[RMDB]
RNA sequence: GGGAACGACUCGAGUAGAGUCGAAAAGAUAUGGACUGAUGGAGACUCAUGUACUACCCACCUCGGAAACGAGAGGUACGAGUCUAUGAAGUCAGUCCUAAGUCAAAUCACUUGUUCGCAAGUGAAAGUGCUUUACGUACUUCGGUACGUAAAGCACAAAAGAAACAACAACAACAAC
Reactivity to DMS in 0.01 (KOAc 150mM, MgCl2 10mM, bicine 150mM(pH8.5), 24C), signal-to-noise 1, nucleotides 027 to 126: g000a090u000a180u000g020g030a010c010u030g000a030u000g000g010a020g020a000c040u020c040a120u020g010u000a000c060u000a040c060c010c020a300c130c000u020c000g000g020a140a160a130c000g010a000g010a090g030g000u000a050c020g000a010g030u030c000u000a180u020g020a120a130g000u010c000a020g000u000c000c000u000a020a060g000u030c080a100a120a210u000c020a030c010u000u000g000u010u020c300g000c020a030a000g000u000g000a000a030a130
Reactivity to 2A3 in 0.01 (KOAc 150mM, MgCl2 10mM, bicine 150mM(pH8.5), 24C), signal-to-noise 2, nucleotides 027 to 126: g050a020u210a170u300g000g000a000c000u000g000a010u030g070g040a020g010a010c020u000c030a100u250g020u080a010c020u110a120c040c010c020a020c010c000u020c000g030g030a030a080a060c030g020a000g000a000g000g010u000a020c010g000a020g010u000c010u030a300u120g060a020a030g010u010c000a000g000u030c000c000u020a070a000g070u040c110a040a010a220u060c010a000c010u060u030g060u070u090c240g000c220a010a030g000u000g010a090a030a040